[RMDB]
This 177-nucleotide RNA was probed chemically with DMS and 2A3. Conditions: 150 mM KOAc, 10 mM MgCl2 and 150 mM bicine (pH 8.5), 24 C. For DMS, 2,924 sequencing reads were counted.

RNA sequence: GGGAACGACUCGAGUAGAGUCGAAAAUAUGGAGAAAAAGAGUAUAAACAUUUGAAUGUUGGUGUAUUGGAUAACAUGACCAAGGUGCUGACAAGAUUUGAGCCGUUUGGCAAUUAUUAUCAAGGAAGCUAAUUUAAUUAUUCGUAAUUAAAUUAGCAAAAGAAACAACAACAACAAC
Reactivity to DMS in 0.01 (KOAc 150mM, MgCl2 10mM, bicine 150mM(pH8.5), 24C), signal-to-noise 3, nucleotides 027 to 126: u010a060u010g000g030a070g000a040a070a080a090a090g010a090g010u010a070u010a120a090a110c040a040u010u010u000g000a120a100u000g010u000u000g010g020u000g020u000a120u000u000g030g010a080u000a050a080c130a080u010g000a110c030c020a030a030g010g030u010g010c040u000g020a080c050a060a070g010a100u010u000u010g000a170g020c010c030g010u010u020u010g010g010c050a070a050u010u000a070u010u020a060u010c040a050a140g000g010a120a160
Reactivity to 2A3 in 0.01 (KOAc 150mM, MgCl2 10mM, bicine 150mM(pH8.5), 24C), signal-to-noise 2, nucleotides 027 to 126: u020a020u000g040g000a010g080a030a150a000a020a010g050a010g060u090a050u080a220a140a010c040a050u060u110u170g110a140a030u060g000u030u040g050g000u010g020u030a100u030u100g040g000a000u010a170a010c030a130u090g060a020c000c000a000a000g040g000u050g000c020u000g010a030c030a010a030g070a140u060u110u070g020a000g000c000c030g090u040u050u050g010g020c000a000a010u060u040a030u040u010a020u080c000a040a000g300g010a050a040